[RMDB]
RNA sequence: GGGAACGACUCGAGUAGAGUCGAAAAGCAGCGUCCAGGUGCGGCUGCAGGGCUGGGAUGAGUUCACGGACAAGGUCGACCGUAUUGUCAGCAUCGGUGCCUUCGAAGCAUUCAAAAUGGAGCGUUAGAUCCGCGGAGUUUUCGAACUCCGCGGAUCAAAAGAAACAACAACAACAAC
Reactivity to 2A3 in 0.01 (KOAc 150mM, MgCl2 10mM, bicine 150mM(pH8.5), 24C), signal-to-noise 1, nucleotides 027 to 126: g000c010a000g000c040g070u060c010c000a000g120g000u080g020c040g060g070c000u050g080c070a060g030g000g000c040u000g060g040g030a090u030g000a000g040u110u150c080a050c040g030g090a040c040a050a000g100g000u030c000g100a030c000c000g040u040a050u000u180g050u060c060a040g000c000a040u000c030g000g000u030g120c000c070u010u020c000g050a050a000g000c000a000u180u000c100a140a110a000a000u120g040g010a220g050c000g100u110u210a010